[RMDB]
RNA sequence: GGGAACGACUCGAGUAGAGUCGAAAAGGGUGUGUAGUGUUUGUGCUAAGGGAAAUCAUAACCUUAGGUAUGUUGUAUAAACAUAACGGCAAACUAGUUAUAGCUAAGGUGUUUCACUACGUUAUAACCAAGGUAUGGACUUCGGUCCAUACCUUGGAAAAGAAACAACAACAACAAC
Reactivity to DMS in 0.01 (KOAc 150mM, MgCl2 10mM, bicine 150mM(pH8.5), 24C), signal-to-noise 3, nucleotides 027 to 126: g010g020g020u010g000u000g020u050a040g030u000g010u000u000u010g000u000g040c040u000a030a020g000g000g000a060a150a190u050c300a050u020a100a120c000c010u000u000a020g010g040u010a000u000g010u000u000g000u000a130u020a050a030a030c010a010u010a030a080c140g000g000c120a050a040a050c080u000a060g020u000u020a040u000a070g010c010u010a110a120g000g000u000g010u010u000u020c040a020c020u000a130c150g000u000u010a020u020a050a160
Reactivity to 2A3 in 0.01 (KOAc 150mM, MgCl2 10mM, bicine 150mM(pH8.5), 24C), signal-to-noise 3, nucleotides 027 to 126: g110g010g000u100g000u010g010u020a060g000u010g020u070u040u080g090u130g060c000u010a000a000g020g010g040a060a010a100u210c070a060u050a070a050c010c080u030u000a000g050g010u010a040u020g000u000u010g100u030a110u150a160a040a000c030a000u010a070a040c050g060g000c050a020a020a030c060u000a040g090u060u080a080u060a070g000c060u050a080a100g040g020u030g010u070u140u130c030a020c030u070a030c040g040u050u000a100u040a060a010
The data come from the RNA Mapping Database (RMDB), libraries RFM100 and RFMREP. Chemical mapping of a 177-nucleotide RNA with DMS and 2A3. Conditions: 150 mM KOAc, 10 mM MgCl2 and 150 mM bicine (pH 8.5), 24 C. Reactivities are given for positions 27 through 126. For DMS the reverse transcriptase was MarathonRT.